[RMDB]
RNA sequence: GGGAACGACUCGAGUAGAGUCGAAAAGGUGGCUCUGAGAGACGUACUCCUCAACGUGAGUCAGAGUCACCGAUUUAGCAUGUUCGUCCUACGUUGCACGUGCAUACGUUGUAGGACGUUCAUGCGAGGGUUCCAGUACCUUCGGGUAUUGGAACCCAAAAGAAACAACAACAACAAC
Reactivity to 2A3 in 0.01 (KOAc 150mM, MgCl2 10mM, bicine 150mM(pH8.5), 24C), signal-to-noise 9, nucleotides 027 to 126: g000g000u000g000g010c000u000c000u000g020a040g010a020g020a060c000g010u050a100c100u110c070c030u100c080a040a010c010g010u030g070a120g100u000c000a000g000a000g010u000c000a000c000c000g000a000u000u010u080a020g000c000a000u000g000u000u000c000g000u000c000c000u010a010c020g080u060u130g110c110a050c150g090u200g060c080a090u160a260c030g060u070u140g020u080a000g000g000a000c000g000u000u000c000a000u000g000c000g000a110
Reactivity to DMS in 0.01 (KOAc 150mM, MgCl2 10mM, bicine 150mM(pH8.5), 24C), signal-to-noise 4, nucleotides 027 to 126: g010g030u000g000g010c000u000c000u000g000a020g010a160g010a020c020g000u000a070c060u010c040c020u000c090a200a000c010g010u000g010a090g000u000c000a020g000a010g020u000c000a000c000c000g010a020u030u010u040a150g000c000a000u000g010u000u000c000g000u010c000c000u000a030c000g040u010u030g020c160a110c110g010u020g010c190a070u060a020c010g040u010u050g000u000a000g000g010a000c000g000u010u000c000a010u000g000c000g010a080